[RMDB]
RNA sequence: GGGAACGACUCGAGUAGAGUCGAAAAAGGCGAACAACGAAGCGUAUGAAGACACACGACUCAACUGCAGGCUUGCAGCCGAUACGAGCAAGCUGUCAAAGCAAAAUUGAGAUUGCACAGCGUUCGCAUUAUAAUAUAUAUUCGUAUAUAUUAUAAUAAAAGAAACAACAACAACAAC
Reactivity to DMS in 0.01 (KOAc 150mM, MgCl2 10mM, bicine 150mM(pH8.5), 24C), signal-to-noise 3, nucleotides 027 to 126: a070g000g000c000g010a010a010c030a110a290c100g000a130a090g010c060g010u030a060u020g000a130a120g000a130c110a080c100a150c070g020a070c020u000c030a030a070c140u010g030c010a100g010g000c020u010u000g000c000a080g000c140c070g000a110u040a070c120g000a090g000c030a050a030g000c000u020g010u040c130a050a070a100g020c010a010a020a080a190u020u030g000a060g000a130u010u010g000c060a060c040a050g030c200g020u000u000c010g010c020
Reactivity to 2A3 in 0.01 (KOAc 150mM, MgCl2 10mM, bicine 150mM(pH8.5), 24C), signal-to-noise 3, nucleotides 027 to 126: a030g090g000c000g010a020a020c020a000a010c050g120a100a050g040c020g060u080a070u260g090a120a010g090a040c030a000c000a000c150g130a030c030u020c010a010a040c060u040g010c030a010g030g040c010u010u030g000c000a050g070c050c040g090a090u140a120c090g020a040g010c010a020a000g010c010u040g090u150c120a110a030a000g000c000a000a070a050a020u080u090g010a030g020a040u040u190g020c040a020c010a030g030c050g050u010u020c000g000c010

An RNA of 177 nucleotides, treated with DMS and 2A3 and read out base by base. For 2A3, 1,567 sequencing reads were counted. It was measured as part of the RMDB library OK1LIB. The DMS profile rests on 3,983 reads.